[RMDB]
RNA sequence: GGGAACGACUCGAGUAGAGUCGAAAAGUAAAAGAGGAGAAAGCGCGCACUCCACAAGCGCGCAGAUGUACGUACCACAUCAGGUACGAACGCGCCAAGGGUGGGAGGCGCGAACCCACCCAAAAAACAAUACAACAAGCUUCGGCUUGUUGUAUUGAAAAGAAACAACAACAACAAC
Reactivity to 2A3 in 0.01 (KOAc 150mM, MgCl2 10mM, bicine 150mM(pH8.5), 24C), signal-to-noise 2, nucleotides 027 to 126: g110u130a030a060a100a080g150a080g090g030a070g060a050a090a040g030c000g000c000g000c010a050c110u040c020c040a030c030a040a040g000c020g000c000g000c050a000g000a020u080g020u030a010c000g010u010a010c000c000a030c010a300u180c100a050g000g000u000a000c000g000a030a000c010g010c000g000c000c030a140a130g090g040g010u010g020g060g000a120g050g000c030g000c010g080a020a010c000c000c010a020c000c020c090a060a000a010a010a030a000
Reactivity to DMS in 0.01 (KOAc 150mM, MgCl2 10mM, bicine 150mM(pH8.5), 24C), signal-to-noise 2, nucleotides 027 to 126: g010u010a060a060a070a070g000a130g010g020a090g000a110a090a120g020c000g010c000g040c000a090c030u000c010c070a040c090a080a080g000c040g010c010g000c010a010g000a030u000g010u000a060c010g000u000a000c030c000a160c300a150u020c180a040g010g010u000a010c000g010a060a020c040g010c020g000c000c040a060a160g000g010g030u000g010g010g010a100g020g000c020g000c080g000a000a060c000c000c000a090c000c010c010a000a010a010a080a020a060